RNA sequence: GGGAACGACUCGAGUAGAGUCGAAAAAUAACACCAUGGGGAUUAGAAAGAAAGACCUUAUCCCACCUAAGGGACAAUCCCUAUCUCCACUUAUAAAAGCUCUUGAUCUUUAUGGAUAUGAUUUACCGUCUUGUUUGAGAUUCGUCUCAAACAAGACAAAAGAAACAACAACAACAAC
Reactivity to DMS in 0.01 (KOAc 150mM, MgCl2 10mM, bicine 150mM(pH8.5), 24C), signal-to-noise 1, nucleotides 027 to 126: a040u000a030a090c000a130c000c080a110u000g000g000g000g000a010u000u080a050g120a120a040a080g000a060a080a200g000a090c020c010u000u050a050u010c050c010c000a100c060c080u020a120a000g000g000g000a250c040a050a140u000c000c050c000u000a050u010c040u020c020c040a000c160u000u040a150u010a050a020a090a090g000c050u000c080u000u000g000a040u000c080u000u030u000a100u050g000g000a010u000a010u010g000a080u010u000u020a080c000c100
Reactivity to 2A3 in 0.01 (KOAc 150mM, MgCl2 10mM, bicine 150mM(pH8.5), 24C), signal-to-noise 6, nucleotides 027 to 126: a000u090a030a060c040a040c020c000a040u070g010g000g010g010a010u010u120a110g160a160a190a020g110a040a130a000g120a060c000c020u000u050a020u120c010c000c000a020c000c050u060a030a050g020g000g010a000c020a000a040u080c010c000c000u030a080u040c020u010c000c010a070c060u110u090a070u120a170a110a010a000g020c040u050c020u100u120g080a060u030c010u000u150u060a070u210g050g000a040u020a060u150g180a200u090u070u230a100c040c020